[RMDB]
RNA sequence: GGGAACGACUCGAGUAGAGUCGAAAAUGCUGUCGUUGACAGCGCCCAACGCUUCACAACCUGAAAGAAGCGCCUGUUAUCAGGACGGUUGAUCCAUUUACCGGUGCAGACCACUGCAAACACCGGGUUUAACAAGCAUCUUUCGAGAUGCUUGUAACAUAAUACGGGUCUUCGGACCCGUAUUAUGAAAAGAAACAACAACAACAAC
Reactivity to DMS in 0.01 (KOAc 150mM, MgCl2 10mM, bicine 150mM(pH8.5), 24C), signal-to-noise 2, nucleotides 027 to 156: u000g010c000u020g020u000c050g060u000u000g000a040c020a040g020c000g020c030c030c020a160a130c030g010c010u040u000c020a200c040a040a090c040c040u010g000a130a200a270g010a040a020g010c010g030c060c050u000g000u010u020a130u010c020a050g020g000a120c070g000g030u000u000g010a190u000c060c060a230u010u000u010a120c000c000g020g000u000g050c000a090g030a300c120c100a250c100u020g000c060a170a140a040c020a020c000c010g000g030g000u010u000u000a110a050c010a020a000g000c010a020u000c010u000u000u010c270g030a070g030a010u000g000c000u000u000g010u000a020a250
Reactivity to 2A3 in 0.01 (KOAc 150mM, MgCl2 10mM, bicine 150mM(pH8.5), 24C), signal-to-noise 2, nucleotides 027 to 156: u140g000c010u010g010u010c060g300u070u190g000a000c000a000g000c000g060c000c000c000a040a000c010g010c010u020u010c010a030c010a130a010c000c000u030g000a020a010a010g000a010a010g000c020g080c000c000u120g040u180u190a110u300c020a000g000g000a010c020g000g050u000u000g010a060u050c040c040a100u070u060u140a080c000c000g010g000u020g000c000a010g110a210c080c060a160c300u070g030c090a070a080a000c040a010c000c000g010g000g030u000u030u070a030a000c000a000a000g010c000a000u050c020u000u080u270c300g130a030g000a010u000g000c020u000u000g000u000a000a000

An RNA of 207 nucleotides, treated with DMS and 2A3 and read out base by base. The reactions ran in a buffer of 150 mM KOAc, 10 mM MgCl2 and 150 mM bicine (pH 8.5), at 24 C. The data come from the RNA Mapping Database (RMDB), library M2RFPK.